Conditions: 150 mM KOAc, 10 mM MgCl2 and 150 mM bicine (pH 8.5), 24 C. The record gives the reactivity of an RNA of 177 nucleotides to DMS and 2A3. It was measured as part of the RMDB libraries RFM100 and RFMREP. DMS adducts were read by reverse transcription with MarathonRT.

RNA sequence: GGGAACGACUCGAGUAGAGUCGAAAAACACGUCUACGGACGUGACCACUCGAUGGCUCAGGUACUUAGUGACUCUCAAUGCUUUUGACAUUUUGGGGGUCACUCUGUGCCUGUGCUGCCAGUGGAAUGUCCUUCUAAUAUUCGUAUUAGAAGGACAAAAAGAAACAACAACAACAAC
Reactivity to DMS in 0.01 (KOAc 150mM, MgCl2 10mM, bicine 150mM(pH8.5), 24C), signal-to-noise 6, nucleotides 027 to 126: a140c010a000c000g010u000c000u000a110c200g030g010a010c000g010u000g000a120c010c010a010c000u000c140g020a020u000g010g010c000u000c000a010g010g020u000a000c000u000u000a020g020u000g010a010c000u000c000u000c010a020a020u000g010c050u010u020u030u020g010a150c030a030u000u010u020u010g010g000g010g000g000u000c000a000c000u000c010u010g000u000g000c000c000u000g000u000g000c000u000g010c030c030a020g010u000g000g000a140a120
Reactivity to 2A3 in 0.01 (KOAc 150mM, MgCl2 10mM, bicine 150mM(pH8.5), 24C), signal-to-noise 9, nucleotides 027 to 126: a000c000a000c000g000u000c010u030a070c250g120g000a000c000g000u000g040a020c000c000a010c000u060c130g100a130u060g010g000c000u000c010a000g010g000u000a000c000u000u000a000g000u000g000a000c000u000c000u000c010a010a010u020g030c050u160u210u170u300g170a210c030a060u100u140u080u060g010g000g000g000g000u000c000a000c000u000c000u000g000u000g010c000c000u000g000u000g000c000u000g000c000c000a000g000u000g000g050a070a110